This 170-nucleotide RNA was probed chemically with 2A3 and DMS.
Source: RMDB library 15KLIB, as collected in RNAgym.
DMS adducts were read by reverse transcription with MarathonRT.
Conditions: 150 mM KOAc, 10 mM MgCl2 and 150 mM bicine (pH 8.5), 24 C.
RNA sequence: GGGAACGACUCGAGUAGAGUCGAAAAGAGUCGGGAGAGGUCAGAACGACUGGGAAAGAAAAGAGAGCAACGGGGCUAGCUGCCGGGUGUUCCACCUACGGGAACGGUGCCGAGUGAGGCUUAUCCCUUACUCCUGUCUUCGGACAGGAGAAAAGAAACAACAACAACAAC
Reactivity to 2A3 in 0.01 (KOAc 150mM, MgCl2 10mM, bicine 150mM(pH8.5), 24C), signal-to-noise 8, nucleotides 027 to 129: g020a000g030u070c030g000g010g010a040g020a040g000g020u060c040a010g060a130a040c050g030a030c030u050g000g000g010a020a060a020g040a020a070a030a010g080a000g000a000g010c010a050a100c050g030g000g010g010c030u060a050g010c030u040g030c020c010g000g010g020u080g030u040u030c030c020a100c030c030u100a060c060g030g000g020a040a010c030g040g030u090g030c010c010g010a040g060u110g040a040g020g000c000u040u060a070u040c000c000c020u000u050a050
Reactivity to DMS in 0.01 (KOAc 150mM, MgCl2 10mM, bicine 150mM(pH8.5), 24C), signal-to-noise 6, nucleotides 027 to 129: g000a060g000u000c070g020g020g010a060g020a010g040g020u030c050a090g020a050a130c070g020a070c050u030g030g000g020a040a040a040g000a030a000a080a070g000a000g030a070g000c090a090a080c110g000g010g010g010c060u020a000g000c050u020g000c000c000g000g010g030u000g010u040u020c060c000a080c070c080u000a090c180g000g000g030a060a050c090g000g000u000g020c000c000g020a090g000u070g030a080g000g000c020u010u070a090u020c070c000c000u000u010a100